The record gives the reactivity of an RNA of 177 nucleotides to 2A3 and DMS. The RNA was probed in 150 mM KOAc, 10 mM MgCl2 and 150 mM bicine (pH 8.5) at 24 C. 2A3 adducts were read by reverse transcription with SuperScript II with manganese.

RNA sequence: GGGAACGACUCGAGUAGAGUCGAAAACUGAGGGUGGUGAAGGACCAACGCAUUGAUGUCCCCCUGCGAAUGGUUUGGCGACUGUGCCAAGAGGGAGGAGUCCGACCUGCAGAGGGAGUCGGAACCGACUCCCUCCCGAGUUCGCUCGGGAGGGAGUAAAAGAAACAACAACAACAAC
Reactivity to 2A3 in 0.01 (KOAc 150mM, MgCl2 10mM, bicine 150mM(pH8.5), 24C), signal-to-noise 8, nucleotides 027 to 126: c040u050g020a090g040g070g060u100g010g030u110g060a090a050g050g030a020c010c030a050a030c060g030c060a090u070u260g110a110u190g300u140c010c010c000c000c000u020g010c020g070a120a110u120g040g000u030u030u030g020g000c020g030a100c110u120g040u120g120c020c010a030a030g050a100g030g020g010a100g010g010a020g020u010c010c000g010a020c000c000u030g000c020a020g030a130g090g050g000a010g020u010c010g010g020a040a020c020c010g020
Reactivity to DMS in 0.01 (KOAc 150mM, MgCl2 10mM, bicine 150mM(pH8.5), 24C), signal-to-noise 9, nucleotides 027 to 126: c080u010g010a110g010g010g020u000g000g020u000g010a130a100g000g000a080c040c040a060a190c090g010c070a080u010u010g010a110u010g010u010c010c010c010c050c040u010g010c040g010a090a100u010g000g010u000u000u000g010g010c030g000a130c210u010g010u010g010c010c020a040a060g000a100g010g000g000a110g000g000a200g010u000c020c020g000a080c030c030u000g010c090a090g010a150g000g000g010a120g010u000c000g000g010a080a140c050c040g000